[RMDB]
RNA sequence: GGGAACGACUCGAGUAGAGUCGAAAAGCGUCAUGUGUAUAAAUGAUUGCGUAGUCAUUAUGCAUCGCAUUCUUUUUGUCAGUCGCAUGACGGAAGUAGCGAUUUGACAAAGAAAAAUCGCAUAAAAGGGAUUUUCAUACUUCGGUAUGAAAAUCCCAAAAGAAACAACAACAACAAC
Reactivity to 2A3 in 0.01 (KOAc 150mM, MgCl2 10mM, bicine 150mM(pH8.5), 24C), signal-to-noise 2, nucleotides 027 to 126: g120c010g000u030c020a040u000g000u040g000u000a000u030a090a100a000u110g000a000u030u030g030c010g020u080a040g230u220c040a040u050u300a000u300g070c020a010u080c000g000c000a000u020u010c000u090u020u000u000u000g280u030c100a210g080u080c010g000c000a020u070g000a020c000g000g030a030a000g000u230a000g000c020g000a010u060u000u020g130a130c150a150a170a030g020a050a160a000a000a000u020c030g000c000a000u150a210a090a120a000